[RMDB]
About this RNA
The data come from the RNA Mapping Database (RMDB), library OK1LIB. An RNA of 177 nucleotides, treated with 2A3 and DMS and read out base by base. The reactions ran in a buffer of 150 mM KOAc, 10 mM MgCl2 and 150 mM bicine (pH 8.5), at 24 C. Values cover nucleotides 27 to 126.
RNA sequence: GGGAACGACUCGAGUAGAGUCGAAAAGGGUGUCGAUCUGCUCCAAGACACCUAGAUCCAUGCUGUCGGGUUUUUACCUUAGGCUCUUUUGAGCGACAGACGGAGCAGAUUCAUUGGAUCUUAAGAAGGGUGGGUGGUAGUUCGCUACCACUUACCCAAAAGAAACAACAACAACAAC
Reactivity to 2A3 in 0.01 (KOAc 150mM, MgCl2 10mM, bicine 150mM(pH8.5), 24C), signal-to-noise 9, nucleotides 027 to 126: g030g010g000u010g000u010c020g020a030u010c000u010g000c000u010c010c040a080a010g010a000c000a000c000c000u000a020g010a060u030c010c010a050u140g040c010u010g010u030c020g020g020g020u050u070u030u170u270a070c010c000u070u160a170g060g030c000u000c000u010u280u110u300g000a010g000c000g000a000c010a010g020a010c020g000g000a000g000c000a000g010a010u060u070c020a010u000u050g040g010a030u010c010u060u100a150a110g110a170a120
Reactivity to DMS in 0.01 (KOAc 150mM, MgCl2 10mM, bicine 150mM(pH8.5), 24C), signal-to-noise 7, nucleotides 027 to 126: g010g000g000u000g010u000c010g010a040u000c010u000g010c000u000c000c010a090a100g000a020c010a010c000c000u000a030g010a060u020c010c010a130u020g000c010u000g000u010c020g000g000g000u000u040u030u020u050a020c010c000u010u050a130g010g010c000u000c000u010u020u030u020g010a010g010c000g000a040c010a010g000a080c240g000g000a010g020c010a020g000a050u020u040c170a200u020u000g010g000a130u010c010u000u020a100a080g010a130a150